[RMDB]
RNA sequence: GGGAACGACUCGAGUAGAGUCGAAAAUUGAAUUUUCUUGACUACUUGAGGAAUCAGUACUGUCAGAUUCUGCUAAUUAAUAGCACCACCACUGGAGGGAAGCAAUUCAGCACAGUAAUGCUAUCCGUGACGGAGGCGAUACUGGAUGGCACAUUGUACAAAUUUAGGACUUCGGUCCUAAAUUUGUAAAAGAAACAACAACAACAAC
Reactivity to 2A3 in 0.01 (KOAc 150mM, MgCl2 10mM, bicine 150mM(pH8.5), 24C), signal-to-noise 1, nucleotides 027 to 156: u120u130g050a030a080u030u020u000u000c010u090u170g040a000c000u020a000c000u070u050g010a010g000g040a000a100u070c020a060g020u030a020c040u050g070u050c010a070g040a100u110u050c040u020g010c010u010a070a070u230u150a110a080u100a070g010c010a010c040c020a070c000c010a090c100u080g000g020a020g060g040g000a050a000g040c020a000a000u080u110c020a000g000c070a000c000a020g050u130a050a000u140g000c040u070a130u040c040c010g100u110g110a070c030g070g020a010g040g040c040g000a000u000a040c010u070g090g040a030u040g060g000c040a040c040a160u020u210g100u080